About this RNA:
Structure probing data (DMS and 2A3) for a 177-nucleotide construct. Values cover nucleotides 27 to 126. It was measured as part of the RMDB library TTRDES.
[RMDB]
RNA sequence: GGGAACGACUCGAGUAGAGUCGAAAAGAUAUGGAACGUAGUCAGCAACAGCUAUAAGUCGGAAACGACUUGAUAGACAUGCUGUCUACGUUCCUAAGUCAAAGGACUAUUGUUCGCAAUAGUCCAACCAAGAGGUCAAGUUCGCUUGACCUCUUGGAAAAGAAACAACAACAACAAC
Reactivity to DMS in 0.01 (KOAc 150mM, MgCl2 10mM, bicine 150mM(pH8.5), 24C), signal-to-noise 2, nucleotides 027 to 126: g000a010u000a150u020g010g000a000a000c000g030u000a010g030u000c010a020g040c010a180a070c240a130g000c010u000a000u000a030a010g020u010c000g010g000a040a020a060c000g040a000c000u000u000g000a030u000a000g000a040c020a300u000g020c000u010g010u000c000u010a010c010g010u000u000c010c000u010a000a040g000u000c030a130a080a140g000g010a020c000u000a010u000u010g010u000u020c230g040c010a010a020u000a010g010u000c000c000a030a080
Reactivity to 2A3 in 0.01 (KOAc 150mM, MgCl2 10mM, bicine 150mM(pH8.5), 24C), signal-to-noise 2, nucleotides 027 to 126: g000a010u020a000u050g000g000a010a010c000g000u000a000g030u030c000a000g010c100a080a150c080a300g000c010u000a000u010a050a030g010u000c000g000g020a000a020a010c000g020a010c010u000u050g070a030u020a000g000a010c110a230u300g000c010u000g000u020c000u000a000c000g000u000u010c000c000u000a000a000g000u000c000a010a070a200g010g000a010c010u010a000u040u010g060u110u150c300g000c190a000a000u000a010g010u020c010c000a000a000